[RMDB]
RNA sequence: GGGAACGACUCGAGUAGAGUCGAAAAACAAUAUAUGGAUGGUAAAAUACCUACUGCAACAGUUGUUAAAAGUACAAGUGCUUCUAGUAACACUGUUAAACCAGUAGCAUCUGGUUGGAAACGUAAUUCGUUCUUAAGAAUUCGUUCUUAAGAACGAAAAAGAAACAACAACAACAAC
Reactivity to 2A3 in 0.01 (KOAc 150mM, MgCl2 10mM, bicine 150mM(pH8.5), 24C), signal-to-noise 5, nucleotides 027 to 126: a000c040a070a040u100a010u040a050u280g040g000a030u030g010g070u220a140a120a100a050u160a080c010c010u010a010c000u020g030c030a020a000c000a010g020u140u030g020u040u060a020a110a010a030g010u030a050c060a170a120g110u070g130c050u030u040c030u070a060g060u020a070a010c000a000c010u010g010u010u030a050a040a030c030c000a000g010u000a010g030c000a020u000c040u030g060g000u020u030g020g020a070a050a000c010g000u100a030a060u010
Reactivity to DMS in 0.01 (KOAc 150mM, MgCl2 10mM, bicine 150mM(pH8.5), 24C), signal-to-noise 5, nucleotides 027 to 126: a110c070a050a090u050a070u020a080u010g010g010a030u000g010g020u020a050a070a100a100u040a090c260c000u000a040c030u000g000c190a050a010c010a030g000u010u000g020u010u000a040a070a020a010g000u000a080c060a100a110g000u010g010c070u000u000c110u020a130g010u010a020a020c000a000c000u000g010u000u000a030a040a070c300c010a000g010u000a020g000c060a030u010c010u000g010g020u000u000g000g000a050a040a040c070g000u020a100a040u000
This 177-nucleotide RNA was probed chemically with 2A3 and DMS.
For DMS the reverse transcriptase was MarathonRT.